[RMDB]
RNA sequence: GGGAACGACUCGAGUAGAGUCGAAAAUGAAUUAUUUAGUGAGGUCUCUGACGCCUUGCGUGUUACGGUUGUUUCGCAAAAGUUGACCGAACUUGAUUAUUUAGAGGAAGUAAAAGUCGUACCAAGGACUCACUCGUUUAUUCGUAAACGAGUGAGUAAAAGAAACAACAACAACAAC
Reactivity to 2A3 in 0.01 (KOAc 150mM, MgCl2 10mM, bicine 150mM(pH8.5), 24C), signal-to-noise 3, nucleotides 027 to 126: u140g020a010a100u130u060a040u040u240u100a050g000u000g040a030g020g080u010c070u030c080u260g050a010c080g060c010c010u020u020g050c060g070u080g060u050u050a040c070g040g010u040u040g000u030u110u070c030g010c010a020a150a010a030g030u080u080g020a000c000c010g000a030a020c010u000u000g020a010u040u060a090u080u020u040a080g080a050g110g060a050a010g020u110a010a030a150a020g020u060c040g020u020a050c020c010a000a050g050g020
Reactivity to DMS in 0.01 (KOAc 150mM, MgCl2 10mM, bicine 150mM(pH8.5), 24C), signal-to-noise 2, nucleotides 027 to 126: u030g010a070a060u020u000a080u020u010u000a070g050u000g010a210g030g020u000c010u020c070u000g020a150c150g020c070c040u040u010g000c080g000u050g020u050u010a020c300g030g000u000u000g000u020u000u010c000g010c130a030a010a070a050g000u000u050g000a010c010c030g000a210a010c040u000u000g000a090u020u000a060u010u040u030a060g010a080g010g010a080a020g020u000a020a020a180a080g000u000c010g000u000a030c010c040a060a100g010g010